[RMDB]
RNA sequence: GGGAACGACUCGAGUAGAGUCGAAAACAAGAACACACAGGAGUACACUCAAUAUGUUGCCUGAAGAGGUCAAGGAAUUCAGAAGGUAGCAUACAGUAACAAGCAGCCGUGAUCUCGGUACCGUCUGGUGCAGAAAGUCAUUCGUGACUUUCUGCACAAAAGAAACAACAACAACAAC
Reactivity to 2A3 in 0.01 (KOAc 150mM, MgCl2 10mM, bicine 150mM(pH8.5), 24C), signal-to-noise 4, nucleotides 027 to 126: c020a030a050g150a150a010c100a000c010a010c080a110g060g020a080g060u090a010c010a010c050u010c020a050a030u010a000u020g020u000u020g000c000c000u020g010a060a030g030a030g060g060u100c030a050a200g140g100a120a130u120u000c020a020g010a070a020g030g000u020a000g000c030a000u010a040c100a000g060u100a090a070c110a120a020g090c040a010g000c000c000g050u020g050a060u020c030u040c000g010g010u070a070c010c000g070u020c070u130g050
Reactivity to DMS in 0.01 (KOAc 150mM, MgCl2 10mM, bicine 150mM(pH8.5), 24C), signal-to-noise 2, nucleotides 027 to 126: c150a030a110g010a170a080c100a030c000a070c060a060g050g000a200g000u000a020c020a070c010u010c140a030a110u000a000u000g000u000u000g020c010c030u010g000a250a100g000a030g010g010u000c100a120a020g000g000a170a110u040u000c000a000g000a300a010g000g000u000a000g000c010a060u000a030c060a040g000u000a040a090c210a120a080g000c110a020g000c000c010g000u000g000a040u030c000u010c040g000g000u000a000c110c040g000u080c080u010g000